[RMDB]
RNA sequence: GGGAACGACUCGAGUAGAGUCGAAAACAACAACGGUGCAGCCGAGGCUUUUCCGCCCCGACCAUUGGGAGCUGACAACAAUUCGAAUGGUGAGAAUGACCGGCCGUUGUCGCGGAUGACGACUCUGUCCCAUUCUAUGGAGACUGAAACUGUUGUAGCUCUACUAUGAUUUCGAUCAUAGUAGAGCAAAAGAAACAACAACAACAAC
Reactivity to DMS in 0.01 (KOAc 150mM, MgCl2 10mM, bicine 150mM(pH8.5), 24C), signal-to-noise 1, nucleotides 027 to 156: c060a090a100c040a050a050c000g020g000u010g040c030a090g010c040c000g000a050g000g000c020u000u000u030u000c080c130g020c030c000c030c010g140a060c030c050a060u010u020g000g030g010a120g000c080u000g020a110c130a030a040c030a020a110u000u000c030g010a080a050u000g010g030u000g030a110g010a140a070u000g000a090c090c000g000g020c020c000g000u010u000g010u000c010g010c040g010g050a120u000g020a220c040g000a070c030u000c000u000g020u000c000c020c010a080u000u000c100u000a120u000g000g000a090g000a070c050u010g000a090a060a080c030u000g010u000u010g000u010a230
Reactivity to 2A3 in 0.01 (KOAc 150mM, MgCl2 10mM, bicine 150mM(pH8.5), 24C), signal-to-noise 4, nucleotides 027 to 156: c050a000a010c000a010a030c000g060g020u140g030c070a050g050c050c010g040a080g040g000c020u100u070u140u040c040c020g000c010c010c000c020g070a080c000c040a040u060u090g080g000g010a060g000c090u100g090a040c000a050a020c010a040a130u050u030c020g090a010a040u060g000g040u060g040a120g070a100a160u120g020a080c020c000g020g010c010c000g010u010u010g020u030c040g010c040g110g020a080u060g040a030c040g020a020c030u000c010u040g020u010c010c000c000a010u150u010c050u060a150u080g060g030a090g010a090c020u080g030a070a040a050c070u040g010u000u000g010u040a040